Background: Structure probing data (2A3 and DMS) for a 177-nucleotide construct.
RNA sequence: GGGAACGACUCGAGUAGAGUCGAAAAGAUAUGGAGGUUGCUGGAGAGCGAGGAUCAUGGCUCGGAAACGAGCCAUGGGAGCUCCAGUGCCUCCUAAGUCAAAUCUGCAGGCUUCGGCCUGCAGAAAGUUUAGAUACAAGUUCGCUUGUAUCUAAACAAAAGAAACAACAACAACAAC
Reactivity to 2A3 in 0.01 (KOAc 150mM, MgCl2 10mM, bicine 150mM(pH8.5), 24C), signal-to-noise 4, nucleotides 027 to 126: g000a000u020a000u060g000g000a010g060g010u300u300g090c010u010g030g010a300g010a030g260c060g130a300g000g000a010u010c000a000u000g000g000c000u010c020g000g000a000a010a000c010g000a000g000c100c020a000u000g000g010g000a000g000c010u030c030c010a000g000u000g010c000c000u010c000c000u000a000a010g000u000c020a010a000a260u000c010u010g010c030a010g030g000c000u080u250c300g160g000c000c030u000g010c000a000g000a000a000a000
Reactivity to DMS in 0.01 (KOAc 150mM, MgCl2 10mM, bicine 150mM(pH8.5), 24C), signal-to-noise 4, nucleotides 027 to 126: g000a020u000a020u010g010g000a010g010g030u010u020g080c000u000g000g020a300g020a100g040c000g000a050g000g010a030u000c000a010u000g000g020c000u000c010g000g000a010a010a040c000g010a010g010c000c000a000u000g000g000g000a010g020c000u000c000c020a010g000u000g010c010c000u000c000c000u000a000a050g000u000c010a060a190a190u000c000u000g010c000a020g010g000c010u000u010c300g030g010c010c000u000g000c000a010g010a010a030a100
The reactions ran in a buffer of 150 mM KOAc, 10 mM MgCl2 and 150 mM bicine (pH 8.5), at 24 C.
Source: RMDB library TTRDES, as collected in RNAgym.
Values cover nucleotides 27 to 126.
The 2A3 profile rests on 10,712 reads.